[RMDB]
RNA sequence: GGGAACGACUCGAGUAGAGUCGAAAAAGGAAGGAUCAUUAUCGAGUUCUGACUGGGUUGUAGCUGGCCUUCCGAGGCACGUGCACGCCCUGCUCAUCCACUCUACACCUGUGCACUUACUGUGGGUUUCAGAUCUGUGAAGCGUACCUUGCGGGGCUUCGUGAAGCGCGUCUGUGCCUGCGUUUAUCACAAACUCUAUAAAGUAUUAGAAUGUGUAUUGCGAUGUAACGCAUCUAUAUACAACUUUCAGCAACGGAUCUCUUGAAAGUCUAGAAUUCGUUCUAGACAAAAGAAACAACAACAACAAC
Reactivity to DMS in 0.01 (KOAc 150mM, MgCl2 10mM, bicine 150mM(pH8.5), 24C), signal-to-noise 4, nucleotides 027 to 266: a100g000g000a090a050g020g000a060u000c060a090u000u000a080u000c090g010a030g000u000u010c040u020g010a100c040u000g010g000g010u010u010g030u000a050g020c090u010g010g000c000c020u000u020c200c110g010a040g010g010c020a050c080g000u000g000c020a070c050g000c060c010c000u000g010c080u000c050a060u030c100c100a050c050u000c040u010a110c130a100c110c070u010g000u000g000c100a070c100u010u000a040c100u020g020u000g000g010g010u010u020u010c050a030g010a050u000c060u020g000u000g020a060a190g000c010g010u000a060c060c030u020u000g020c100g020g000g000g010c040u010u000c070g030u000g010a090a140g000c080g020c200g000u000c050u010g000u010g000c020c030u000g000c030g010u000u000u010a060u010c020a030c010a040a070a080c030u010c030u020a080u010a090a060a110g000u010a050u010u000a110g000a040a010u010g010u010g010u010a040u010u000g020c080g000a030u000g000u010a110a080c200g000c010a020u010c020u000a110u020a030u010a020c020a030a130c020u010u000u000c030a130g010c050a080a050c060g000g010a040u000c030u000c060u010u010g010a070a100a130
Reactivity to 2A3 in 0.01 (KOAc 150mM, MgCl2 10mM, bicine 150mM(pH8.5), 24C), signal-to-noise 2, nucleotides 027 to 266: a000g040g000a070a010g020g010a020u070c030a050u020u150a020u170c060g030a040g030u170u010c040u040g050a040c040u020g030g000g070u130u280g040u150a100g010c020u040g030g010c000c000u070u020c060c050g000a020g000g000c020a020c130g030u040g000c050a000c010g020c000c010c000u000g000c010u010c000a040u000c020c000a010c010u000c000u010a020c030a050c040c000u040g020u010g060c030a030c090u070u150a040c050u110g010u040g060g020g020u050u230u150c030a010g000a050u000c020u060g010u030g090a070a020g000c000g050u050a040c000c000u040u030g010c170g000g020g000g010c000u070u060c040g010u020g020a080a020g040c020g000c010g030u010c030u060g040u020g010c010c000u020g000c000g020u030u040u040a080u040c000a010c020a040a070a010c010u000c010u070a080u120a180a180a030g020u030a050u130u050a060g070a050a020u040g010u000g000u030a040u010u080g030c020g000a010u000g030u070a040a010c060g000c070a010u000c010u020a030u000a000u010a130c030a070a060c020u020u080u040c020a030g030c010a040a010c010g040g020a040u010c000u000c000u070u040g110a100a040a030
The record gives the reactivity of an RNA of 307 nucleotides to DMS and 2A3.
For 2A3 the reverse transcriptase was SuperScript II with manganese.
The RNA was probed in 150 mM KOAc, 10 mM MgCl2 and 150 mM bicine (pH 8.5) at 24 C.
For DMS the reverse transcriptase was MarathonRT.
For DMS, 9,698 sequencing reads were counted.